[RMDB]
RNA sequence: GGGAACGACUCGAGUAGAGUCGAAAAUUUGGUAUUCGUUGGAUCAGCUUCACAAGGAGUGUAUUCUGAUGAUAAGCAAGUCAACAUCAAUCUAUGAGUGUCGGAGAAGGGUUUUGAGAAUGUAGCAAAUAGUAACCUUCUUCGGAAGGUUACUAUUAAAAGAAACAACAACAACAAC
Reactivity to DMS in 0.01 (KOAc 150mM, MgCl2 10mM, bicine 150mM(pH8.5), 24C), signal-to-noise 9, nucleotides 027 to 126: u010u010u010g000g010u010a090u010u010c070g010u010u000g000g010a050u010c160a120g000c040u000u000c040a100c240a120a180g000g000a050g020u000g000u010a080u010u010c040u010g010a030u000g010a070u010a080a130g010c060a040a040g010u000c070a050a090c120a060u010c060a040a060u010c070u020a070u010g010a080g020u000g000u000c030g010g000a080g010a060a060g000g000g000u000u000u000u000g000a060g010a050a050u010g010u000a050g010c100a050
Reactivity to 2A3 in 0.01 (KOAc 150mM, MgCl2 10mM, bicine 150mM(pH8.5), 24C), signal-to-noise 6, nucleotides 027 to 126: u050u040u090g040g030u050a040u040u090c040g000u020u030g020g010a060u030c030a040g040c020u070u030c050a050c050a220a090g050g010a020g030u050g040u110a140u100u040c040u030g070a090u030g020a040u040a080a050g060c030a050a020g040u070c010a020a030c010a080u050c020a040a060u040c030u070a080u130g050a030g100u070g050u100c060g000g020a060g020a050a040g030g010g010u040u030u050u070g080a110g010a080a050u120g030u080a010g040c030a020
The record gives the reactivity of an RNA of 177 nucleotides to DMS and 2A3. For 2A3 the reverse transcriptase was SuperScript II with manganese. It was measured as part of the RMDB libraries RFM100 and RFMREP. The RNA was probed in 150 mM KOAc, 10 mM MgCl2 and 150 mM bicine (pH 8.5) at 24 C.